[RMDB]
RNA sequence: GGGAACGACUCGAGUAGAGUCGAAAAUAGUUAUGCAGGUCCCUAGCACAUUAGGAAGAAGUAAUACAACAGAUGCAAAUGAUACGGGAUUGUAUUCUAAUCAUUUACACAAUGCUUCUUUAGCAUGAAGUUAAAUCAUAUUCGUAUGAUUUAACUUAAAAGAAACAACAACAACAAC
Reactivity to 2A3 in 0.01 (KOAc 150mM, MgCl2 10mM, bicine 150mM(pH8.5), 24C), signal-to-noise 6, nucleotides 027 to 126: u050a010g100u120u100a060u180g020c020a020g000g070u020c010c000c000u010a030g020c020a030c020a110u120u170a070g120g030a020a010g010a010a000g030u050a100a140u140a190c090a100a010c020a110g120a230u020g010c010a000a020a020u010g020a010u050a120c150g010g000g040a020u060u150g110u240a070u040u000c000u010a020a010u000c010a000u000u020u050a020c030a000c010a020a030u020g000c000u000u000c000u030u040u020a050g020c040a080u120g100
Reactivity to DMS in 0.01 (KOAc 150mM, MgCl2 10mM, bicine 150mM(pH8.5), 24C), signal-to-noise 9, nucleotides 027 to 126: u010a100g010u010u010a050u000g020c040a110g010g000u000c010c010c010u000a130g010c090a150c150a080u000u000a100g010g000a030a020g000a030a020g000u000a030a090u010a100c280a080a080c180a080g000a130u000g010c020a010a010a010u000g000a020u000a050c250g000g000g000a010u000u010g010u010a300u010u000c000u000a030a040u000c000a010u000u000u000a020c010a020c050a070a050u000g000c000u000u000c020u000u000u000a070g010c120a060u000g000
Source: RMDB library OK2TST, as collected in RNAgym. The record gives the reactivity of an RNA of 177 nucleotides to 2A3 and DMS. Reactivities are rounded to 0.1 and cut off at 0 and 3. For 2A3, 12,104 sequencing reads were counted.